RNA sequence: GGGAACGACUCGAGUAGAGUCGAAAAGUAUCGACGCCACCAGCCGCUACAACGCCAUCGAAGAAUCGAUCGUGGAGGGCUUCGCCUCAAGCGUCCGUGUGGUCACAGCUGCCGCGCUGAUCAUGAACGUCGUGGUUUUAUUCGUAAAACCACGACGAAAAGAAACAACAACAACAAC
Reactivity to 2A3 in 0.01 (KOAc 150mM, MgCl2 10mM, bicine 150mM(pH8.5), 24C), signal-to-noise 1, nucleotides 027 to 126: g040u010a010u100c000g050a020c030g060c050c010a020c000c010a020g040c000c000g020c020u120a050c060a110a050c000g020c050c000a020u000c070g050a100a020g150a290a230u130c030g020a020u030c050g010u040g000g040a080g020g040g000c040u040u050c150g020c020c000u040c040a040a030g050c000g000u020c080c030g060u090g000u070g020g020u120c030a040c020a120g060c020u030g000c010c060g000c020g000c030u000g050a070u100c050a120u090g100a080a030
Reactivity to DMS in 0.01 (KOAc 150mM, MgCl2 10mM, bicine 150mM(pH8.5), 24C), signal-to-noise 1, nucleotides 027 to 126: g010u000a080u000c070g000a110c100g000c060c040a070c210c040a130g030c000c060g000c050u010a030c030a130a140c030g010c060c090a030u000c020g040a120a150g010a150a080u000c030g010a030u020c080g000u000g000g000a120g010g000g000c110u030u000c100g000c010c000u000c030a060a080g010c040g000u000c100c010g000u010g020u010g000g000u010c070a150c110a100g000c100u010g000c060c160g010c120g000c030u030g010a050u010c100a070u020g040a090a080
This 177-nucleotide RNA was probed chemically with 2A3 and DMS. The RNA was probed in 150 mM KOAc, 10 mM MgCl2 and 150 mM bicine (pH 8.5) at 24 C. Reactivities are given for positions 27 through 126. It was measured as part of the RMDB library OK2TST. For 2A3, 888 sequencing reads were counted. For DMS, 759 sequencing reads were counted.